Chemical mapping of a 177-nucleotide RNA with 2A3 and DMS.
DMS adducts were read by reverse transcription with MarathonRT.

[RMDB]
RNA sequence: GGGAACGACUCGAGUAGAGUCGAAAAUACGUUGGAGGUAAACAAAUACGGGUCCUGCUUAGGAGAAAAGAAAAACGUCUUACAGCCAGUGUCUAAACUCCAAACAACGGAAUGUAUCAAUGAGACCACACCAUGACUAGUUCGCUAGUCAUGGUGUAAAAGAAACAACAACAACAAC
Reactivity to 2A3 in 0.01 (KOAc 150mM, MgCl2 10mM, bicine 150mM(pH8.5), 24C), signal-to-noise 3, nucleotides 027 to 126: u150a020c050g000u020u020g010g010a040g010g050u080a070a160a010c020a030a080a020u190a080c020g030g030g100u110c000c000u010g000c040u070u120a050g010g000a060g000a020a140a010a000g130a060a130a040a060a000c050g060u030c020u030u040a030c040a000g050c040c010a060g020u010g010u100c000u030a030a040a120c010u030c010c000a150a080a040c030a040a020c070g050g020a090a040u080g060u040a080u120c040a070a070u150g030a050g040a110c000c030
Reactivity to DMS in 0.01 (KOAc 150mM, MgCl2 10mM, bicine 150mM(pH8.5), 24C), signal-to-noise 4, nucleotides 027 to 126: u070a040c120g020u000u000g000g000a080g000g020u020a060a020a080c090a080a180a090u010a080c060g000g000g020u010c010c020u000g000c140u000u010a070g020g010a040g000a060a000a090a070g010a020a040a050a090a060c200g000u000c040u000u000a100c260a050g010c130c060a040g010u010g030u000c020u000a090a110a130c060u020c000c010a020a030a070c130a040a120c100g000g010a040a040u000g030u040a040u020c090a030a090u010g000a150g020a080c060c030
Reactivities are given for positions 27 through 126.
The reactions ran in a buffer of 150 mM KOAc, 10 mM MgCl2 and 150 mM bicine (pH 8.5), at 24 C.